[RMDB]
RNA sequence: GGGAACGACUCGAGUAGAGUCGAAAACUCAACUGCCAUACAAGGGGAGGUUUCGGCCAAAUGUUGUAUGCAGAAAGCGUGAGGAAGGUAGCACUUAGACACUCACGAGUAGCGGUUCGGCAGUAGUAAAGGUCCUGGCGCUUCGGCGCCAGGACAACCUACAAAUUACGUUCGCGUAAUUUGUAGGAAAAGAAACAACAACAACAAC
Reactivity to 2A3 in 0.01 (KOAc 150mM, MgCl2 10mM, bicine 150mM(pH8.5), 24C), signal-to-noise 3, nucleotides 027 to 156: c020u020c010a030a070c020u010g010c010c020a000u010a030c010a010a050g030g040g010g000a070g040g030u040u060u120c220g130g000c010c010a070a070a070u100g030u080u000g000u040a050u030g010c020a010g140a060a060a000g040c020g020u010g010a010g040g040a120a050g120g050u090a030g090c020a020c140u140u110a040g030a100c050a010c120u020c000a010c010g020a030g030u060a030g020c070g020g100u120u140c060g060g000c020a020g000u140a010g020u070a090a120a030g100g000u000c000c000u000g010g000c020g000c000u030u020c130g060g000c010g000c000c010a000g000g000a000c000a000a000
Reactivity to DMS in 0.01 (KOAc 150mM, MgCl2 10mM, bicine 150mM(pH8.5), 24C), signal-to-noise 2, nucleotides 027 to 156: c070u020c000a160a080c010u000g020c030c070a170u030a050c030a130a030g000g010g020g030a300g020g010u010u000u020c110g060g020c040c030a030a160a150u010g030u000u000g000u000a070u000g000c010a180g000a070a090a070g020c020g040u000g010a020g000g020a130a070g000g020u000a080g000c020a150c070u000u000a080g010a120c040a110c000u010c000a050c030g030a100g070u000a050g020c030g000g020u000u000c030g030g050c030a060g020u010a060g000u000a050a060a150g030g010u000c000c020u020g020g080c030g040c000u000u000c300g030g030c000g030c000c000a000g000g010a000c000a010a000

Chemical mapping of a 207-nucleotide RNA with 2A3 and DMS. 2A3 adducts were read by reverse transcription with SuperScript II with manganese. The 2A3 profile rests on 1,522 reads. Reactivities are given for positions 27 through 156. The reactions ran in a buffer of 150 mM KOAc, 10 mM MgCl2 and 150 mM bicine (pH 8.5), at 24 C.